[RMDB]
RNA sequence: GGGAACGACUCGAGUAGAGUCGAAAAGAUUCGCCGUCGGCAUUUGCCCAGCAGCCAUGACCUACCAGGCUGCGGUGCGGCUCGCCGCACAGGUCAUCCCUCAUCGGGCGCGUCCUGCGUCCUUCCAAAAACUGACUAACCUUCGGGUUAGUCAGAACACCACAUUGCAGUUCGCUGCAAUGUGGUGAAAAGAAACAACAACAACAAC
Reactivity to 2A3 in 0.01 (KOAc 150mM, MgCl2 10mM, bicine 150mM(pH8.5), 24C), signal-to-noise 1, nucleotides 027 to 156: g030a100u080u150c090g000c000c000g000u040c000g030g020c030a110u080u030u280g000c000c000c000a040g030c000a000g000c010c010a120u120g040a130c000c040u200a200c040c070a000g020g000c000u000g000c060g000g000u180g000c080g000g020c070u070c110g040c000c000g040c010a010c000a030g020g020u000c030a100u090c020c040c030u120c080a180u150c020g000g020g000c000g030c000g100u190c020c130u090g000c010g060u030c000c000u060u160c030c060a030a070a010a100a100c000u000g010a010c000u000a040a030c010c000u020u040c110g030g000g000u010u000a000g000u020c000a000g000a000a000
Record summary: Structure probing data (2A3) for a 207-nucleotide construct. It was measured as part of the RMDB library M2RFPK. Values cover nucleotides 27 to 156. 2A3 adducts were read by reverse transcription with SuperScript II with manganese. The reactions ran in a buffer of 150 mM KOAc, 10 mM MgCl2 and 150 mM bicine (pH 8.5), at 24 C.